[RMDB]
RNA sequence: GGGAACGACUCGAGUAGAGUCGAAAAAAUACAGGAUCUUGCUGUCCGUUUCUGAGAUGUUAAUACAGGAUCUUGCUUUCUGUUUCCUAGAAAAUUGGCAACUUCUCCAUCGUGCGGCGGCUUGGCGUGCAGGAGUGCAUUCUCCUGGUUACACAAACCAUAAAUGGAGUUUCGACUCCAUUUAUGGAAAAGAAACAACAACAACAAC
Reactivity to 2A3 in 0.01 (KOAc 150mM, MgCl2 10mM, bicine 150mM(pH8.5), 24C), signal-to-noise 5, nucleotides 027 to 156: a000a000u220a020c040a030g050g000a070u050c010u010u060g010c030u060g090u100c030c020g040u080u140u090c120u080g060a080g020a120u080g030u190u190a100a050u160a180c040a030g050g000a020u020c030u030u130g050c030u050u070u010c020u030g050u050u060u030c010c010u030a040g140a060a130a040a060u120u110g030g020c020a050a050c050u050u020c010u010c050c020a120u080c070g070u050g040c020g030g000c010g010g010c000u030u040g030g010c010g020u030g000c020a020g010g020a020g010u040g070c040a030u100u040c000u000c010c010u020g020g050u090u190a020c060a010c010a060a040a030
Reactivity to DMS in 0.01 (KOAc 150mM, MgCl2 10mM, bicine 150mM(pH8.5), 24C), signal-to-noise 3, nucleotides 027 to 156: a050a100u000a070c030a040g020g000a040u000c000u000u010g030c020u010g020u000c030c060g040u000u000u000c090u010g000a150g000a070u000g020u000u010a060a130u010a090c040a030g010g000a020u000c020u000u000g020c040u000u010u000c040u000g010u000u000u000c020c010u000a120g010a070a030a080a100u000u010g020g010c040a070a060c050u000u010c030u000c020c040a080u000c080g010u000g030c050g050g010c060g010g020c060u000u000g040g010c060g050u010g010c010a050g000g010a040g020u000g020c130a100u000u000c030u000c020c000u020g020g010u000u000a060c060a050c040a060a080a150